Chemical mapping of a 177-nucleotide RNA with DMS. DMS adducts were read by reverse transcription with MarathonRT. The reactions ran in a buffer of 150 mM KOAc, 10 mM MgCl2 and 150 mM bicine (pH 8.5), at 24 C.
RNA sequence: GGGAACGACUCGAGUAGAGUCGAAAAGUGCUUCUUGUUUCUGGCACGUUGUGUCUUCACGCAGACAGAAGCUACCCAGGUAAUUCUGUUCCCGUAACGCUCAACGUCCAGAGCAGGUAAGCCAGGACACAAAUGCACUCUUCGGAGUGCAUUUGUGAAAAGAAACAACAACAACAAC
Reactivity to DMS in 0.01 (KOAc 150mM, MgCl2 10mM, bicine 150mM(pH8.5), 24C), signal-to-noise 1, nucleotides 027 to 126: g030u010g010c010u000u000c000u010u030g000u000u000u000c000u010g000g010c220a010c020g010u000u000g000u000g000u000c080u000u000c300a060c010g010c200a110g030a030c000a030g000a040a010g030c240u000a010c010c080c220a300g000g010u000a080a050u000u000c010u000g040u010u000c030c300c030g000u000a040a060c300g010c000u000c000a030a010c030g010u000c030c000a020g010a010g000c000a020g000g000u000a010a040g010c000c060a160g000g000a190